[RMDB]
RNA sequence: GGGAACGACUCGAGUAGAGUCGAAAAGGGGUGGACUCUGUCCCCUAGGGUCCCUAGAAGGGCAAAGACCAGAGAGUUGACAAGUCUGUUAUUAGGAAUAAUCCUUAGCCAUGUAAUGGAGAAAGGAAGAGGAGGUAACAUUCGUGUUACCUCCUCUAAAAGAAACAACAACAACAAC
Reactivity to DMS in 0.01 (KOAc 150mM, MgCl2 10mM, bicine 150mM(pH8.5), 24C), signal-to-noise 2, nucleotides 027 to 126: g020g000g000g030u000g000g020a060c000u000c050u000g020u000c000c010c020c030u000a030g000g020g000u000c080c000c030u000a040g040a130a130g000g010g030c090a030a060a130g000a130c050c030a100g000a120g010a110g040u000u000g000a120c110a070a140g000u000c030u000g030u020u000a070u000u010a090g010g000a060a070u010a110a190u000c000c020u000u010a100g000c010c010a030u020g020u000a070a060u000g010g010a060g000a070a030a040g010g000a080